[RMDB]
RNA sequence: GGGAACGACUCGAGUAGAGUCGAAAACGUCCUCCAGGGCGACAAGCGGGCGAUCUUCUCGGCUGCCGCGCAUGCGCAGCGCGCCGUGACUUACCUGCAUGAUCUGCAGCCGAACGCACAGACAGAGCCCGGAGGUGGUAUUCGUACCACCUCCGGGAAAAGAAACAACAACAACAAC
Reactivity to 2A3 in 0.01 (KOAc 150mM, MgCl2 10mM, bicine 150mM(pH8.5), 24C), signal-to-noise 3, nucleotides 027 to 126: c010g030u010c000c020u000c020c050a070g010g000g020c020g000a050c010a070a020g090c020g000g010g010c060g070a110u030c070u130u050c040u090c000g000g000c010u030g020c040c000g010c020g000c040a030u150g040c050g030c100a020g030c000g010c050g010c040c040g040u080g030a080c040u090u090a070c000c020u060g000c000a020u030g030a060u040c030u030g010c020a000g000c000c020g010a050a020c030g010c040a050c000a060g090a050c010a020g070a030g060
Reactivity to DMS in 0.01 (KOAc 150mM, MgCl2 10mM, bicine 150mM(pH8.5), 24C), signal-to-noise 1, nucleotides 027 to 126: c080g030u000c000c000u010c140c090a220g000g000g000c000g030a150c140a090a090g010c130g020g000g020c060g010a050u000c030u000u000c080u000c000g000g030c010u000g000c010c030g050c090g000c020a000u020g020c010g000c140a050g020c070g000c030g000c040c000g000u020g010a140c090u020u040a100c170c080u030g030c010a130u010g010a150u000c100u090g000c120a060g000c080c000g000a050a170c160g000c030a080c000a050g000a130c050a060g000a080g000